[RMDB]
RNA sequence: GGGAACGACUCGAGUAGAGUCGAAAAUCUCGCAAGUUCGCUUGCGAGAGUAAUAAAUAAAAUGGGUUCAACUCCCCCCCUUUUCCGAGGGUAUCGGAAACCGUACAAACGGCUUCGGCCGUUUGAAUAGAGUAGUUUAAUUCGUUAAACUACUCUAAAAAGAAACAACAACAACAAC
Reactivity to 2A3 in 0.01 (KOAc 150mM, MgCl2 10mM, bicine 150mM(pH8.5), 24C), signal-to-noise 2, nucleotides 027 to 126: u000c000u000c010g010c000a000a020g000u090u140c180g010c150u000u000g000c010g010a010g000a000g010u010a000a130u040a050a040a010u160a050a060a030a100u060g000g020g060u130u240c040a090a070c080u030c010c000c000c010c030c010c000u000u100u000u000c000c000g010a000g010g030g070u150a030u000c000g000g020a000a000a010c040c000g100u150a100c000a010a000a000c000g000g020c020u000u040c100g150g000c000c000g000u000u000u020g000a000a010
Reactivity to DMS in 0.01 (KOAc 150mM, MgCl2 10mM, bicine 150mM(pH8.5), 24C), signal-to-noise 4, nucleotides 027 to 126: u000c000u000c000g020c000a010a010g000u010u010c190g020c000u000u000g010c000g000a010g000a010g000u000a040a080u010a080a060a080u010a050a040a090a100u000g020g000g000u000u000c140a080a300c100u010c000c000c000c000c000c000c000u000u000u000u000c000c000g000a010g000g000g020u010a030u000c010g000g000a000a010a050c300c150g010u000a160c020a010a010a010c000g000g010c000u000u010c260g030g010c000c000g010u000u000u000g000a060a120